[RMDB]
RNA sequence: GGGAACGACUCGAGUAGAGUCGAAAAAGAUGUUAAAGAUUAUGACACUUUAGUUUCUGAAGGAUUCGGACUUUUACAAGCAGUAGGUAAAGGUAGUAAGCAUAAACCGAGAUUAGUAACCAUCACACACAUUGGCCUUUUUCGAAAGGCCAAUGUGAAAAGAAACAACAACAACAAC
Reactivity to DMS in 0.01 (KOAc 150mM, MgCl2 10mM, bicine 150mM(pH8.5), 24C), signal-to-noise 2, nucleotides 027 to 126: a030g000a030u050g010u000u000a040a030a130g010a250u030u000a050u060g000a090c220a020c000u000u000u030a000g000u000u020u030c000u010g000a070a200g000g000a060u000u000c020g050g000a090c000u000u000u030u000a090c080a060a190g010c080a070g000u050a010g000g000u030a040a070a040g000g030u000a030g000u020a110a020g070c050a170u000a000a190a050c000c000g000a080g020a030u000u000a090g010u080a100a070c000c000a050u000c150a030c240a220
Reactivity to 2A3 in 0.01 (KOAc 150mM, MgCl2 10mM, bicine 150mM(pH8.5), 24C), signal-to-noise 2, nucleotides 027 to 126: a000g090a120u020g010u040u070a060a170a050g080a300u070u110a110u300g050a040c010a000c000u100u230u070a000g110u010u010u000c000u000g000a020a010g050g000a090u010u040c040g070g050a000c000u030u040u050u000a000c000a010a180g050c090a110g050u080a080g190g000u000a030a010a000g000g040u050a040g030u030a010a010g000c130a190u060a100a120a000c000c000g010a000g000a070u020u020a170g140u100a050a000c040c000a120u290c000a000c000a000